This 177-nucleotide RNA was probed chemically with 2A3 and DMS. Reactivities are given for positions 27 through 126. The reactions ran in a buffer of 150 mM KOAc, 10 mM MgCl2 and 150 mM bicine (pH 8.5), at 24 C. DMS adducts were read by reverse transcription with MarathonRT.
[RMDB]
RNA sequence: GGGAACGACUCGAGUAGAGUCGAAAACAAGCGCGUCUUGUGCACAGGAUGUUUGGCGGGACGAAGCGCGACAGGUCAGCGGCAGCGUAGGUCGCCUCCUGUGCGGCCGCCGGGAUGUUGCCUGGCGUCUAGUGAGGGGGUUCGCUCCUUCGCUAGAAAAAGAAACAACAACAACAAC
Reactivity to 2A3 in 0.01 (KOAc 150mM, MgCl2 10mM, bicine 150mM(pH8.5), 24C), signal-to-noise 9, nucleotides 027 to 126: c030a020a020g030c090g020c030g090u050c020u040u070g040u060g010c010a000c010a030g020g020a060u080g100u130u120u100g050g000c010g000g010g020a050c020g050a050a030g020c020g000c000g040a030c010a040g020g070u120c020a010g040c010g060g010c010a040g010c040g050u080a040g020g030u030c010g000c000c000u020c000c000u000g010u020g010c000g000g010c000c010g010c010c010g030g020g020a120u100g040u080u050g030c010c010u010g010g010c010g040
Reactivity to DMS in 0.01 (KOAc 150mM, MgCl2 10mM, bicine 150mM(pH8.5), 24C), signal-to-noise 9, nucleotides 027 to 126: c030a040a050g010c040g010c130g000u020c010u010u010g000u010g010c020a030c020a030g000g000a110u020g010u020u030u020g010g010c010g010g000g010a070c020g000a090a200g010c030g010c020g000a090c080a080g000g000u010c090a110g010c020g010g010c040a110g010c040g010u010a070g010g010u010c030g000c020c020u010c010c010u000g010u000g000c000g010g010c130c010g010c010c000g000g000g000a060u000g000u000u010g000c000c000u000g000g000c020g000